Source: RMDB library OK3TST, as collected in RNAgym. Chemical mapping of a 207-nucleotide RNA with DMS and 2A3. Reactivities are given for positions 27 through 156. The 2A3 profile rests on 1,170 reads. The reactions ran in a buffer of 150 mM KOAc, 10 mM MgCl2 and 150 mM bicine (pH 8.5), at 24 C.
[RMDB]
RNA sequence: GGGAACGACUCGAGUAGAGUCGAAAAAGACAAGUCAAGAGCCAUUGAGCAAGGGCCAACUGAUACACAAUGGACUUGCUUUUAAAGAAAAGACCACUAUCUCCCAUUGACUGUGUGGGCUGAGAAGCCAGUUUUAGUCUUGGUUGACGUGGAUGGACUAAAUCGUCCGAUUCGUCGGACGAUUUAGAAAAGAAACAACAACAACAAC
Reactivity to DMS in 0.01 (KOAc 150mM, MgCl2 10mM, bicine 150mM(pH8.5), 24C), signal-to-noise 2, nucleotides 027 to 156: a000g000a020c040a110a080g000u010c020a130a090g000a080g010c040c000a130u010u000g010a060g010c010a070a100g000g020g070c030c030a080a150c070u000g040a230u010a130c140a130c040a140a090u000g020g010a300c040u000u000g020c020u010u030u020u010a080a100a150g000a120a060a070a100g010a040c000c010a070c010u000a150u000c020u000c040c000c060a140u000u000g040a050c000u010g040u010g040u010g000g000g020c050u000g000a180g010a170a070g000c010c030a090g000u000u000u000u010a090g020u010c010u010u000g010g020u000u000g000a070c300g050u000g010g000a140u020g000g000a300
Reactivity to 2A3 in 0.01 (KOAc 150mM, MgCl2 10mM, bicine 150mM(pH8.5), 24C), signal-to-noise 2, nucleotides 027 to 156: a000g080a050c030a040a010g030u140c030a070a050g030a030g110c000c020a010u040u100g020a040g000c040a060a100g030g000g020c040c050a090a050c070u100g050a090u190a220c150a010c020a090a170u070g040g000a000c000u000u020g000c000u060u040u040u120a110a160a020g150a020a090a000a020g090a030c000c010a000c020u030a020u030c020u020c000c020c010a010u010u110g000a010c000u020g010u000g040u140g080g050g000c010u020g010a010g000a160a010g020c030c010a040g020u040u050u060u220a000g000u030c000u010u010g030g000u010u000g030a020c020g010u010g010g010a050u090g050g000a010
For 2A3 the reverse transcriptase was SuperScript II with manganese.